[RMDB]
An RNA of 207 nucleotides, treated with 2A3 and read out base by base. 2A3 adducts were read by reverse transcription with SuperScript II with manganese. The reactions ran in a buffer of 150 mM KOAc, 10 mM MgCl2 and 150 mM bicine (pH 8.5), at 24 C. The 2A3 profile rests on 1,678 reads. Reactivities are given for positions 27 through 156.
RNA sequence: GGGAACGACUCGAGUAGAGUCGAAAAACCCUGGUCGAUACGUCGACCAGGCAAUGCCGCCACAACGGCUUCCUGGCGUGGCGGAUCUCAUCCAAUGGAGCAACGCUCCGGAUACGUCCGGAGCGAAAAAAGCUCUGCUUCUUCGGAAGCAGAGCAACUAGUGACUAAGGUUCGCCUUAGUCACUAGAAAAGAAACAACAACAACAAC
Reactivity to 2A3 in 0.01 (KOAc 150mM, MgCl2 10mM, bicine 150mM(pH8.5), 24C), signal-to-noise 2, nucleotides 027 to 156: a010c240c000c000u000g010g010u000c000g000a010u010a090c170g070u000c000g010a000c000c000a000g000g000c000a000a020u010g000c010c010g000c010c000a010c000a050a030c040g050g000c010u160u190c000c020u030g010g000c000g000u000g000g020c010g010g000a000u010c030u020c020a120u090c050c090a080a110u230g000g020a010g000c010a050a030c010g000c000u000c010c020g010g010a020u030a030c170g070u000c010c020g000g000a000g000c000g010a010a000a000a000a000a000g010c000u000c000u000g000c000u000u000c000u020u070c150g090g000a000a000g000c010a000g000a000g010c000a000a000